The record gives the reactivity of an RNA of 177 nucleotides to DMS and 2A3. Source: RMDB library OK2TRN, as collected in RNAgym. The RNA was probed in 150 mM KOAc, 10 mM MgCl2 and 150 mM bicine (pH 8.5) at 24 C. The 2A3 profile rests on 1,421 reads.

RNA sequence: GGGAACGACUCGAGUAGAGUCGAAAAAAGGUGGUCUUUGUGGCCAACGACUGGCACGCCGGGUUGGUCCCCUCCUACAUUGCCGGCAAGUACCGCAGAGCCGGCGUUUACAAGGAUGCGCGGUGCAGCUACAUGACAUCUUCGGAUGUCAUGUAGCAAAAGAAACAACAACAACAAC
Reactivity to DMS in 0.01 (KOAc 150mM, MgCl2 10mM, bicine 150mM(pH8.5), 24C), signal-to-noise 2, nucleotides 027 to 126: a090a120g000g020u000g000g000u000c010u040u010u010g050u000g000g000c000c000a050a110c020g000a050c040u010g030g010c090a090c110g020c120c020g020g000g040u000u000g000g000u000c010c010c000c030u000c010c010u020a130c170a050u020u000g020c010c010g000g030c000a210a100g000u000a040c060c030g040c030a180g050a220g000c010c010g000g020c010g010u020u020u000a110c300a100a110g010g000a090u000g020c200g030c040g010g000u000g020c090a170
Reactivity to 2A3 in 0.01 (KOAc 150mM, MgCl2 10mM, bicine 150mM(pH8.5), 24C), signal-to-noise 1, nucleotides 027 to 126: a010a020g150g020u030g020g010u030c030u080u240u200g240u210g040g010c000c020a000a010c000g040a030c040u100g070g110c060a010c060g050c070c000g000g010g030u020u010g030g020u040c030c010c010c000u020c000c000u000a110c010a150u090u160g000c000c020g000g000c000a010a040g050u070a020c020c000g030c000a020g030a000g080c020c000g000g010c000g000u010u010u040a070c060a020a030g070g010a050u080g020c030g000c010g070g020u040g020c020a010
Annotation:
As a SHAPE reagent, 2A3 marks flexible, mostly unpaired nucleotides at the ribose 2'-OH.